[RMDB]
RNA sequence: GGGAACGACUCGAGUAGAGUCGAAAAACAGAAGAGCACUGCACGGAAUAGGAGUAAGAGCGUAGCGAUGGGGGGAGAUGCUAGGAGUAGGAGGAGACCGAAGCGAGGAGGAAAGUAAAGAAAGCAAGAAUUACAUUCUCUUCGGAGAAUGUAAUUCAAAAGAAACAACAACAACAAC
Reactivity to DMS in 0.01 (KOAc 150mM, MgCl2 10mM, bicine 150mM(pH8.5), 24C), signal-to-noise 1, nucleotides 027 to 126: a080c070a120g000a100a060g020a060g040c020a080c020u000g000c070a070c060g030g020a060a070u010a030g000g000a070g020u020a050a100g010a090g000c060g000u000a070g000c090g000a030u000g020g000g020g000g010g000a040g000a080u000g000c040u000a100g000g020a070g000u000a040g010g020a030g000g000a110g000a120c020c050g000a100a060g000c080g010a050g010g010a130g000g030a040a040a070g040u010a030a040a080g000a070a030a060g010c140a060a050
Reactivity to 2A3 in 0.01 (KOAc 150mM, MgCl2 10mM, bicine 150mM(pH8.5), 24C), signal-to-noise 1, nucleotides 027 to 126: a000c100a030g090a140a020g030a040g040c030a000c070u050g010c060a040c100g010g080a080a060u190a130g010g030a050g020u010a080a020g030a010g090c070g010u030a020g000c040g080a030u040g010g000g000g000g090g040a030g010a010u060g030c030u060a010g000g010a060g020u070a030g030g060a030g020g010a030g070a010c010c030g000a040a010g020c000g010a020g000g040a020g010g030a090a080a030g010u170a040a040a130g080a050a020a040g070c090a050a030